An RNA of 170 nucleotides, treated with 2A3 and DMS and read out base by base.
RNA sequence: GGGAACGACUCGAGUAGAGUCGAAAAUCGCAAAUGACCUCACUACCGCCCUACGCAGGCCUAUUAACGCUACGGAUAGAUCACAUUAUUAUGUGGAUUCCGUUACAGUUAAAGAGACUGUUGUUCACCAGGAGAUUCUUCGGAAUCUCCAAAAGAAACAACAACAACAAC
Reactivity to 2A3 in 0.01 (KOAc 150mM, MgCl2 10mM, bicine 150mM(pH8.5), 24C), signal-to-noise 7, nucleotides 027 to 129: u100c020g000c060a000a070a080u170g070a110c000c000u010c000a050c030u130a110c040c050g060c030c020c020u060a050c030g010c040a030g000g020c030c000u160a160u110u040a020a000c030g010c120u030a010c000g000g030a050u050a080g200a120u100c000a000c000a010u020u160a130u240u150a010u160g000u010g040g030a030u030u040c000c010g010u000u060a010c060a060g010u000u050a020a030a030g090a020g030a020c090u050g000u050u080g000u000u020c050a030c100c010a030
Reactivity to DMS in 0.01 (KOAc 150mM, MgCl2 10mM, bicine 150mM(pH8.5), 24C), signal-to-noise 2, nucleotides 027 to 129: u030c130g040c130a170a000a060u050g010a090c040c030u030c050a070c070u060a120c050c110g010c040c000c010u020a070c110g100c170a090g000g000c030c000u040a060u070u000a030a040c090g010c220u000a030c040g040g020a060u000a070g060a120u000c000a100c040a040u000u070a070u040u000a020u060g030u020g000g020a050u000u020c060c000g030u070u070a000c050a100g030u000u010a000a000a000g020a150g000a000c040u060g080u000u000g000u070u000c010a080c110c130a080
For DMS the reverse transcriptase was MarathonRT. The reactions ran in a buffer of 150 mM KOAc, 10 mM MgCl2 and 150 mM bicine (pH 8.5), at 24 C.